[RMDB]
RNA sequence: GGGAACGACUCGAGUAGAGUCGAAAACUACCAGAAACCACCACACAAGUCCUUAACAGUGUUAGGAAGCAUAUGUUCACAUUCGUACAAGGCCCACCUGGUACCGGAAAAACCUUUGCCGCUGCACAUCUAAUCAAACAUCUUGUCAAACACAAGCCAAACCCGAUUUAUUCGUAAAUCGGGUUUGAAAAGAAACAACAACAACAAC
Reactivity to 2A3 in 0.01 (KOAc 150mM, MgCl2 10mM, bicine 150mM(pH8.5), 24C), signal-to-noise 4, nucleotides 027 to 156: c030u050a060c020c010a010g090a070a040a030c030c050a040c010c020a070c020a040c040a110a070g040u050c020c000u070u090a090a030c050a090g040u030g030u130u090a040g020g060a050a040g050c060a050u140a050u190g030u050u050c040a030c030a090u040u070c060g040u070a050c020a050a050g010g030c010c000c010a010c000c040u020g040g000u030a020c030c030g010g070a080a030a030a070a060c010c030u050u050u050g000c010c000g040c020u040g000c010a020c010a060u060c060u120a120a050u150c070a040a020a050c020a060u120c020u030u070g020u060c030a020a060a110c080a020c050a130a010g160c120
Reactivity to DMS in 0.01 (KOAc 150mM, MgCl2 10mM, bicine 150mM(pH8.5), 24C), signal-to-noise 2, nucleotides 027 to 156: c010u010a300c010c040a200g000a090a110a100c010c010a070c010c010a010c050a070c100a100a110g020u000c000c040u000u000a050a110c020a130g010u000g000u000u000a080g020g010a080a150g010c010a090u000a120u010g010u000u000c070a060c060a120u000u000c050g030u000a080c060a060a080g000g020c000c020c040a030c020c040u000g010g000u000a040c040c010g060g020a040a050a090a060a070c010c030u000u000u000g020c030c000g000c060u000g030c000a050c040a040u000c050u030a010a060u010c070a030a070a090c080a080u000c010u000u030g010u000c040a070a160a130c070a070c030a050a050g000c110

An RNA of 207 nucleotides, treated with 2A3 and DMS and read out base by base.
The DMS profile rests on 2,680 reads.
Reactivities are given for positions 27 through 156.
Conditions: 150 mM KOAc, 10 mM MgCl2 and 150 mM bicine (pH 8.5), 24 C.
For DMS the reverse transcriptase was MarathonRT.